[RMDB]
RNA sequence: GGGAACGACUCGAGUAGAGUCGAAAACGCCAACGACGAGCGUUUCGCUCUCGCCGCUUAAGCGGUGAGCCGCUGCACUGAUCUGUCCUUGGGUCAGGCGGAGGAAGCAACUCCCGUAAGGGAGCCAUCGCCUAAAGGGGCAACCCUUGAACCGCAGGCUAAGAUACCCGUUCGCGGGUAUCUUAGCAAAAGAAACAACAACAACAAC
Reactivity to 2A3 in 0.01 (KOAc 150mM, MgCl2 10mM, bicine 150mM(pH8.5), 24C), signal-to-noise 1, nucleotides 027 to 156: c000g030c030c010a090a060c180g230a050c060g000a080g050c010g000u010u100u100c050g000c000u040c000u020c040g000c000c000g030c070u300u300a280a060g010c030g030g010u010g000a000g000c010c070g060c000u050g000c020a020c130u010g010a020u000c000u020g050u060c080c000u090u270g010g010g000u030c020a000g020g020c030g000g020a010g000g020a010a010g000c020a000a160c000u000c000c000c000g060u100a090a160g000g010g000a010g000c000c000a000u000c000g000c010c000u010a000a010a010g040g010g000g000c010a040a130c000c000c000u000u040g010a000a010c000c020g030c040a050g040

Chemical mapping of a 207-nucleotide RNA with 2A3. Source: RMDB library RSTRND, as collected in RNAgym. For 2A3, 699 sequencing reads were counted. 2A3 is a SHAPE reagent: it acylates the 2'-hydroxyl of flexible nucleotides of all four kinds. 2A3 adducts were read by reverse transcription with SuperScript II with manganese.